[RMDB]
RNA sequence: GGGAACGACUCGAGUAGAGUCGAAAAUUACCUGCUCGUGCUGCUCGGCCGCCGCGGCGUGCUCGGCGCGUGGCUCGACCGGAUCGGCAUCCAGCUCGUGUUCACCUGGCAGGGCGCGGUGAUCGCAGCCGACGGACUAUUUCGAUAGUCCGUCGGCAAAAGAAACAACAACAACAAC
Reactivity to DMS in 0.01 (KOAc 150mM, MgCl2 10mM, bicine 150mM(pH8.5), 24C), signal-to-noise 1, nucleotides 027 to 126: u010u000a080c020c000u000g030c110u000c100g000u010g060c000u020g000c060u010c070g020g020c070c020g000c060c020g020c040g000g040c030g020u000g000c010u010c250g020g000c100g010c250g060u010g020g010c010u000c200g000a070c040c000g010g000a070u020c040g000g000c100a130u000c040c040a070g020c090u000c030g000u020g000u010u000c050a050c020c050u010g050g000c030a030g010g000g000c020g010c010g020g010u010g000a060u000c040g030c110a100
Reactivity to 2A3 in 0.01 (KOAc 150mM, MgCl2 10mM, bicine 150mM(pH8.5), 24C), signal-to-noise 1, nucleotides 027 to 126: u100u020a080c000c000u030g030c040u030c100g000u060g000c020u040g030c030u040c100g050g030c010c010g000c020c010g000c020g080g100c120g050u030g030c010u030c010g080g020c000g030c000g100u130g060g030c000u020c060g040a040c000c000g000g090a170u210c060g040g130c040a030u000c020c000a020g030c010u030c060g000u020g010u100u130c010a010c050c000u040g040g030c030a020g000g080g080c010g000c080g000g000u040g000a020u050c050g020c040a010